Description:
An RNA of 177 nucleotides, treated with 2A3 and DMS and read out base by base. For DMS, 1,262 sequencing reads were counted. For DMS the reverse transcriptase was MarathonRT. Source: RMDB library OK1LIB, as collected in RNAgym.
RNA sequence: GGGAACGACUCGAGUAGAGUCGAAAACAAUACGUCCACGCUCGUUAAGUACCACAUCAACGAGCGGUUGUGCUGCGGACGAAGGUAUUAGCCGCGGUGCAAGGACGGGGAUAAUACCUUCGACAAACAGCAAGCAUGCAUUCGUGCAUGCUUGCUGAAAAGAAACAACAACAACAAC
Reactivity to 2A3 in 0.01 (KOAc 150mM, MgCl2 10mM, bicine 150mM(pH8.5), 24C), signal-to-noise 2, nucleotides 027 to 126: c040a030a030u160a130c020g040u060c000c000a060c040g000c010u000c000g000u030u060a220a000g130u120a210c020c020a150c010a070u080c040a000a000c000g010a000g000c000g000g000u040u030g040u000g000c010u000g000c030g000g030a040c000g000a020a000g070g010u060a010u200u100a020g050c000c000g060c020g030g020u120g030c020a020a040g040g090a000c030g000g050g000g000a050u220a050a000u030a020c000c000u010u050c030g030a050c050a000a140a000
Reactivity to DMS in 0.01 (KOAc 150mM, MgCl2 10mM, bicine 150mM(pH8.5), 24C), signal-to-noise 1, nucleotides 027 to 126: c100a270a020u100a010c070g000u000c020c120a250c130g050c010u000c000g000u000u000a060a100g020u070a200c230c120a130c060a060u020c020a040a000c000g000a000g000c010g000g070u010u000g000u000g000c000u000g020c070g020g020a160c080g010a000a100g000g000u000a080u020u000a070g000c010c000g020c000g020g000u020g000c070a110a010g000g000a040c040g050g000g000g000a000u030a000a010u000a040c000c000u000u000c000g000a160c030a110a090a170
For 2A3, 902 sequencing reads were counted. Values cover nucleotides 27 to 126.